[RMDB]
RNA sequence: GGGAACGACUCGAGUAGAGUCGAAAACAGGUGGAAUCCUCCAAUGCCAUCGCUCGGUAUGUCGCCGACAUCACAAGCGGUGCAGAGCUCAUCAUCGAGCCCUGCGCAGGCCUGGGCAGGCUCACAGAUCAUGACACAAUUUCGAUUGUGUCAUGAUAAAAGAAACAACAACAACAAC
Reactivity to DMS in 0.01 (KOAc 150mM, MgCl2 10mM, bicine 150mM(pH8.5), 24C), signal-to-noise 9, nucleotides 027 to 126: c100a090g010g010u010g010g000a090a100u000c020c010u000c050c040a070a090u000g010c020c010a090u010c020g020c020u000c050g000g010u010a030u000g010u000c040g030c170c120g000a050c030a010u000c080a100c120a070a060g010c010g000g020u010g010c010a020g010a040g000c010u000c010a080u000c300a130u010c180g000a010g010c010c010c000u000g000c010g020c060a080g000g010c020c130u000g020g000g020c090a110g010g010c220u010c060a040c120a120g000
Reactivity to 2A3 in 0.01 (KOAc 150mM, MgCl2 10mM, bicine 150mM(pH8.5), 24C), signal-to-noise 5, nucleotides 027 to 126: c020a030g020g070u060g040g070a060a080u050c010c020u000c010c030a050a070u110g020c010c010a050u050c020g020c030u030c030g070g000u080a040u060g050u030c060g110c300c130g020a010c010a020u060c030a010c010a090a020g010c010g030g000u030g000c010a000g000a000g010c000u010c020a160u030c010a070u150c120g010a000g000c000c000c000u020g000c020g020c030a030g010g040c000c020u040g030g000g000c040a000g010g020c020u030c010a060c020a010g110